[RMDB]
RNA sequence: GGGAACGACUCGAGUAGAGUCGAAAACAAAUUAAGCUAACAGCCGAGCAGCAAACGCUGUUCUCCGUACGGCAGAACUCCAGCCCGUAUGAUCGGCCUAACGUGACCGCCCUAUGGCAAGGACGGGGUGGUAGUCAUCCUUCGGGAUGACUACCACAAAAGAAACAACAACAACAAC
Reactivity to 2A3 in 0.01 (KOAc 150mM, MgCl2 10mM, bicine 150mM(pH8.5), 24C), signal-to-noise 3, nucleotides 027 to 126: c030a000a070a030u300u230a100a000g110c050u100a090a020c030a040g020c000c010g020a000g050c000a000g000c040a280a080a130c250g000c060u000g010u070u010c090u000c050c000g030u020a030c020g000g070c080a050g080a120a050c000u030c100c010a050g020c020c000c000g010u000a010u040g080a090u030c010g000g020c000c000u020a080a000c070g080u060g080a050c000c000g020c000c000c000u120a110u140g110g030c090a040a000g000g000a000c000g000g000g010
Reactivity to DMS in 0.01 (KOAc 150mM, MgCl2 10mM, bicine 150mM(pH8.5), 24C), signal-to-noise 1, nucleotides 027 to 126: c030a020a250a160u000u000a220a300g050c060u000a080a200c300a300g000c000c000g020a050g000c080a020g130c020a100a140a060c110g000c000u030g000u000u000c160u000c030c060g000u000a020c100g000g000c000a050g000a060a140c220u060c300c090a090g000c050c000c000g000u000a110u000g000a050u000c000g000g080c000c000u000a060a080c300g060u000g000a160c090c070g050c000c000c000u000a220u000g000g050c300a200a020g020g000a080c000g070g000g000
Structure probing data (2A3 and DMS) for a 177-nucleotide construct.
Source: RMDB library RFM100, as collected in RNAgym.
For 2A3 the reverse transcriptase was SuperScript II with manganese.